Structure probing data (2A3 and DMS) for a 177-nucleotide construct. Conditions: 150 mM KOAc, 10 mM MgCl2 and 150 mM bicine (pH 8.5), 24 C. The data come from the RNA Mapping Database (RMDB), library RFMREP. Reactivities are given for positions 27 through 126.
RNA sequence: GGGAACGACUCGAGUAGAGUCGAAAAUGUAGUAACAUAGCUAUUCCCCUUUCGGCGAGACUUGGCGUGUUUCUGUCGUUCUUAGUAUAGCAUAUUUAUAAUGCGCUUACAUUUUCUUGCCAUGAAGGACCUAAUGGAAGUUCGCUUCCAUUAGGUCAAAAGAAACAACAACAACAAC
Reactivity to 2A3 in 0.01 (KOAc 150mM, MgCl2 10mM, bicine 150mM(pH8.5), 24C), signal-to-noise 2, nucleotides 027 to 126: u110g000u020a050g010u010a130a050c060a200u110a110g000c010u090a050u050u070c000c000c000c000u010u090u070c070g010g010c010g010a000g000a020c020u050u070g010g010c020g050u070g070u020u030u040c050u080g040u000c010g000u030u010c010u050u030a090g040u050a080u100a140g050c010a020u060a060u130u130u020a170u150a080a060u010g000c020g010c020u000u100a030c020a050u070u120u020u020c000u010u030g000c000c010a040u110g030a020a010g080
Reactivity to DMS in 0.01 (KOAc 150mM, MgCl2 10mM, bicine 150mM(pH8.5), 24C), signal-to-noise 3, nucleotides 027 to 126: u010g020u000a070g040u010a060a050c100a080u000a150g000c040u000a120u000u000c010c020c000c140u000u000u010c250g010g000c020g010a060g010a080c290u000u000g000g000c080g030u010g000u000u020u000c130u000g020u000c030g020u000u000c010u000u000a040g020u000a030u000a070g010c030a300u000a040u000u000u010a060u010a090a050u000g010c030g000c060u000u000a170c180a090u000u000u000u000c010u000u010g000c030c010a040u000g010a050a100g000